RNA sequence: GGGAACGACUCGAGUAGAGUCGAAAAGCAAAGCACAUGAAGCACAUGAAGCACAUGAAGCACAUGAAGCACAUGAAGCACAUGAAGCACAUGAAGCACAUGAAGCACUUGAAGCACAUGAAAAAAACAAUACAGGAAUCUUCGGAUUCCUGUAUUGAAAAGAAACAACAACAACAAC
Reactivity to DMS in 0.01 (KOAc 150mM, MgCl2 10mM, bicine 150mM(pH8.5), 24C), signal-to-noise 3, nucleotides 027 to 126: g010c070a100a070a150g010c030a110c050a020u030g030a080a080g030c020a170c040a030u000g030a050a090g020c010a250c030a040u000g020a130a100g030c010a120c030a000u010g010a080a110g010c070a180c040a010u020g000a070a120g030c040a210c050a030u000g000a020a080g020c030a150c040a010u000g010a050a100g030c040a070c030a020u000g010a090a080g010c010a010c030u000u000g010a050a110g000c050a050c070a120u010g010a000a010a010a080a080a060a170
Reactivity to 2A3 in 0.01 (KOAc 150mM, MgCl2 10mM, bicine 150mM(pH8.5), 24C), signal-to-noise 3, nucleotides 027 to 126: g030c040a050a060a050g000c010a030c010a070u060g070a120a030g040c010a020c000a040u030g070a120a030g030c010a010c000a040u030g060a120a010g010c000a000c000a050u030g080a150a010g050c040a040c020a140u030g090a130a030g010c020a010c000a050u020g040a080a020g010c010a000c000a070u040g050a060a010g000c010a020c000a050u050g030a090a000g000c010a020c050u060u060g060a060a020g020c030a010c010a120u180g080a100a050a000a010a000a000a030